[RMDB]
RNA sequence: GGGAACGACUCGAGUAGAGUCGAAAAGAUAUGGAUGAAUAGUCGAGGGAGGAUUAUCGGAAACGAUAAUCUACCCACCCUACCCACCGACGUUCAUCCUAAGUCAAAAUCCUCGUUCGCGAGGAAACUUCAACGUACUGUUCGCAGUACGUUGAAGAAAAGAAACAACAACAACAAC
Reactivity to 2A3 in 0.01 (KOAc 150mM, MgCl2 10mM, bicine 150mM(pH8.5), 24C), signal-to-noise 1, nucleotides 027 to 126: g000a000u060a020u150g000g020a000u010g010a020a020u120a300g040u000c020g030a250g020g000g030a090g000g020a020u000u010a010u000c000g020g000a060a030a010c030g010a010u010a020a000u000c000u030a030c000c010c000a160c030c010c040u160a180c040c030c020a090c120c000g000a000c000g010u000u000c000a000u020c020c000u040a100a020g000u000c040a000a000a020a300u030c000c010u010c020g040u080u050c180g050c010g050a000g000g000a050a040a010
Reactivity to DMS in 0.01 (KOAc 150mM, MgCl2 10mM, bicine 150mM(pH8.5), 24C), signal-to-noise 1, nucleotides 027 to 126: g000a080u000a250u000g050g030a010u000g020a020a040u010a060g060u020c000g020a110g000g000g140a300g000g000a030u070u000a010u000c020g030g000a120a060a050c000g000a000u000a020a000u000c000u000a010c010c040c100a120c150c050c130u000a090c050c050c040a220c170c010g000a030c000g000u010u000c000a040u000c000c000u000a010a080g000u020c010a030a060a140a090u000c000c000u000c010g000u010u030c170g000c000g030a000g000g000a010a000a020
The record gives the reactivity of an RNA of 177 nucleotides to 2A3 and DMS. The DMS profile rests on 748 reads. For 2A3, 2,330 sequencing reads were counted. The reactions ran in a buffer of 150 mM KOAc, 10 mM MgCl2 and 150 mM bicine (pH 8.5), at 24 C. Reactivities are given for positions 27 through 126.